RNA sequence: GGGAACGACUCGAGUAGAGUCGAAAAGGUCCUCGCUUCGGCGAGGACCAGAGCACCACUCCUGCCGGAGUUAAGGCCAAACGGACAGCCGGGUGCAAAGCCAAUUGUUUAAGUUCGCUUAAACAAACCCCUUUAACAUGUUCGCAUGUUAAAGGGGAAAAGAAACAACAACAACAAC
Reactivity to 2A3 in 0.01 (KOAc 150mM, MgCl2 10mM, bicine 150mM(pH8.5), 24C), signal-to-noise 1, nucleotides 027 to 126: g030g000u050c000c000u000c000g030c000u080u080c210g060g050c000g000a000g000g000a010c000c000a010g000a010g000c010a010c000c000a000c010u020c010c040u190g270c100c130g010g010a020g020u020u150a090a060g020g000c000c000a070a160a040c090g010g010a030c020a010g030c010c010g030g000g000u010g030c040a030a000a010g000c000c030a080a120u030u010g000u010u010u000a000a010g010u030u060c220g000c100u000u000a000a010a010c000a000a010a030
Reactivity to DMS in 0.01 (KOAc 150mM, MgCl2 10mM, bicine 150mM(pH8.5), 24C), signal-to-noise 2, nucleotides 027 to 126: g030g000u000c000c000u000c000g030c000u000u020c200g040g020c000g030a010g010g000a010c000c010a010g000a070g010c010a010c020c000a070c000u010c010c000u020g020c300c140g000g000a020g010u000u010a080a050g020g000c000c020a020a110a100c210g000g000a040c020a190g000c030c000g000g000g000u000g010c010a080a040a130g000c010c020a030a130u000u010g000u000u000u000a020a010g010u000u000c230g000c000u010u000a020a010a020c000a010a060a230

An RNA of 177 nucleotides, treated with 2A3 and DMS and read out base by base. For DMS the reverse transcriptase was MarathonRT.